[RMDB]
RNA sequence: GGGAACGACUCGAGUAGAGUCGAAAAACACCAGCUCCUGUGUCAACCACUCCCAAGAGGGCUCACGGGGGAAGUUCCAACAUUGUAAUGGUAAGGGCCACGAGAGGCUCCAUCUGGAUAUGCCUGGGAAGGAGUUAUUCAGGAGCUAGCUGGGCAACCCUGGUAGGAUAUUCGUAUCCUACCAGGGAAAAGAAACAACAACAACAAC
Reactivity to DMS in 0.01 (KOAc 150mM, MgCl2 10mM, bicine 150mM(pH8.5), 24C), signal-to-noise 1, nucleotides 027 to 156: a110c070a080c010c000a100g040c030u000c020c000u000g000u010g030u010c040a070a070c030c060a090c020u000c030c000c030a090a170g000a100g000g020g000c050u000c060a040c070g020g040g060g000g020a060a050g000u000u050c000c010a080a200c110a080u000u000g010u000a170a150u000g000g010u000a200a050g010g000g060c010c000a130c050g020a300g000a240g030g020c010u010c010c010a050u000c040u010g040g010a190u010a050u010g000c020c000u010g030g010g010a080a030g000g000a100g000u000u010a110u020u000c010a050g010g000a090g020c020u000a010g010c070u000g000g000g010c020a130a090
Reactivity to 2A3 in 0.01 (KOAc 150mM, MgCl2 10mM, bicine 150mM(pH8.5), 24C), signal-to-noise 3, nucleotides 027 to 156: a000c050a040c010c010a010g000c020u000c000c000u010g000u000g070u070c050a020a020c000c020a040c040u000c000c000c010a040a070g070a180g070g000g030c010u000c030a090c060g020g000g000g000g000a030a010g030u070u080c030c000a060a090c030a200u090u300g130u170a140a090u070g010g020u010a040a090g050g020g010c020c010a030c080g170a160g000a050g180g030c020u010c020c010a150u100c080u080g050g000a050u060a070u250g060c030c060u080g000g030g020a010a050g050g030a090g020u020u020a020u050u020c000a000g000g010a010g000c000u000a000g000c000u040g000g000g080c020a000a090
The record gives the reactivity of an RNA of 207 nucleotides to DMS and 2A3. The RNA was probed in 150 mM KOAc, 10 mM MgCl2 and 150 mM bicine (pH 8.5) at 24 C.